[RMDB]
RNA sequence: GGGAACGACUCGAGUAGAGUCGAAAAGUCAGCUUGUUCGCAAGCUGACAAACUGGACACACCCACACCCAGGCGAACCCGUGUCAAAAUGGGUGUGGGUAAAAAGGACACUGUUCGCAGUGUCCAAGACUAUCGGAUCGUUCGCGAUCCGAUAGUCAAAAGAAACAACAACAACAAC
Reactivity to DMS in 0.01 (KOAc 150mM, MgCl2 10mM, bicine 150mM(pH8.5), 24C), signal-to-noise 1, nucleotides 027 to 126: g000u000c000a040g010c010u000u000g030u000u000c290g020c110a060a030g020c010u100g000a000c010a010a050a060c050u000g000g010a060c230a090c130a050c000c000c000a000c000a010c070c000c040a070g000g080c210g020a050a000c030c140c160g000u010g000u010c100a020a060a200a030u000g000g050g030u000g020u000g000g030g090u020a000a000a030a120a050g020g000a010c000a000c000u000g020u000u020c170g000c000a020g000u000g000u000c000c000a050a020
Reactivity to 2A3 in 0.01 (KOAc 150mM, MgCl2 10mM, bicine 150mM(pH8.5), 24C), signal-to-noise 1, nucleotides 027 to 126: g000u000c000a000g010c000u050u020g000u030u090c160g030c100a000a000g030c010u000g030a000c000a010a010a000c010u050g160g090a030c010a010c020a000c150c030c000a010c000a000c000c000c000a020g010g000c000g030a040a040c020c010c100g290u300g020u230c100a270a150a190a150u010g000g000g000u010g000u000g010g000g010u000a000a000a000a000a000g000g000a000c020a010c010u010g030u040u000c140g060c110a000g000u000g000u000c000c000a020a000
Structure probing data (DMS and 2A3) for a 177-nucleotide construct. The DMS profile rests on 770 reads. For 2A3, 1,237 sequencing reads were counted. Reactivities are given for positions 27 through 126.